Structure probing data (2A3) for a 207-nucleotide construct. The data come from the RNA Mapping Database (RMDB), library M2RFPK. The reactions ran in a buffer of 150 mM KOAc, 10 mM MgCl2 and 150 mM bicine (pH 8.5), at 24 C.

RNA sequence: GGGAACGACUCGAGUAGAGUCGAAAAAGCAUACCAGCUCGUACGCGAGCUGGUAUGCAAAAAUUGGUGUAGCCUUACCGUAGUAGGCACAAAAAGGUCAGCUGGAUCUACGGAUCCAGCUGACGAAAAAAGUGUUUUGUGUUCGCACAAAACACAACAUGGCUAAUUACUUCGGUAAUUAGCCAUGAAAAGAAACAACAACAACAAC
Reactivity to 2A3 in 0.01 (KOAc 150mM, MgCl2 10mM, bicine 150mM(pH8.5), 24C), signal-to-noise 1, nucleotides 027 to 156: a000g000c000a000u000a000c030c000a030g030c010u000c000g070u070a060c300g000c000g080a000g050c030u000g000g000u000a000u000g010c000a000a000a000a000a000u040u120g000g000u010g070u080a010g000c000c000u000u020a030c030c050g000u000a000g000u000a010g010g000c030a010c030a050a080a010a030a010g090g000u000c010a000g000c000u020g000g000a000u000c000u000a080c300g080g000a000u000c000c000a000g000c000u000g000a000c020g010a010a000a000a000a000a000g000u000g010u000u000u000u000g020u010g020u020u040c100g050c050a000c000a000a010a000a000c000a000c000a010a010